[RMDB]
The record gives the reactivity of an RNA of 177 nucleotides to DMS and 2A3. Reactivities are given for positions 27 through 126. Source: RMDB library OK1LIB, as collected in RNAgym. As a SHAPE reagent, 2A3 marks flexible, mostly unpaired nucleotides at the ribose 2'-OH. The 2A3 profile rests on 1,785 reads.

RNA sequence: GGGAACGACUCGAGUAGAGUCGAAAAGUAUGUAUGGAUAACCAUACGUACAAAUAAUUGCCUCAUGGUGGUGGCUGGGGGUACCCUCAUGGUGGUGGGUGUGGAAAAUAAAGAUCCGAAAGGAUCAGGAUAGCAUCUACUUCGGUAGAUGCUAUCCAAAAGAAACAACAACAACAAC
Reactivity to DMS in 0.01 (KOAc 150mM, MgCl2 10mM, bicine 150mM(pH8.5), 24C), signal-to-noise 2, nucleotides 027 to 126: g000u030a000u000g010u000a010u030g000g030a260u040a090a040c000c000a000u000a010c030g000u000a000c010a050a040a140u060a080a180u020u020g110c020c010u000c120a190u010g040g000u020g020g020u030g010g000c060u000g000g000g000g020g040u000a070c080c000c020u040c030a020u000g010g040u040g000g000u010g000g010g000u000g000u020g000g000a130a060a040a020u000a050a070a070g000a000u000c000c000g000a000a130a220g010g000a020u000c010a030
Reactivity to 2A3 in 0.01 (KOAc 150mM, MgCl2 10mM, bicine 150mM(pH8.5), 24C), signal-to-noise 3, nucleotides 027 to 126: g000u020a010u000g000u010a000u000g030g020a170u000a280a300c010c000a000u000a000c000g000u000a000c000a000a080a010u210a020a090u120u090g040c000c000u070c060a060u120g030g010u020g010g050u040g050g030c080u050g030g000g000g000g010u030a050c020c010c000u060c070a020u110g000g040u070g010g090u120g040g020g030u090g020u120g010g080a040a110a000a000u250a080a110a020g000a000u000c000c000g010a030a000a050g000g000a000u000c000a000
Reactivities are rounded to 0.1 and cut off at 0 and 3.
The reactions ran in a buffer of 150 mM KOAc, 10 mM MgCl2 and 150 mM bicine (pH 8.5), at 24 C.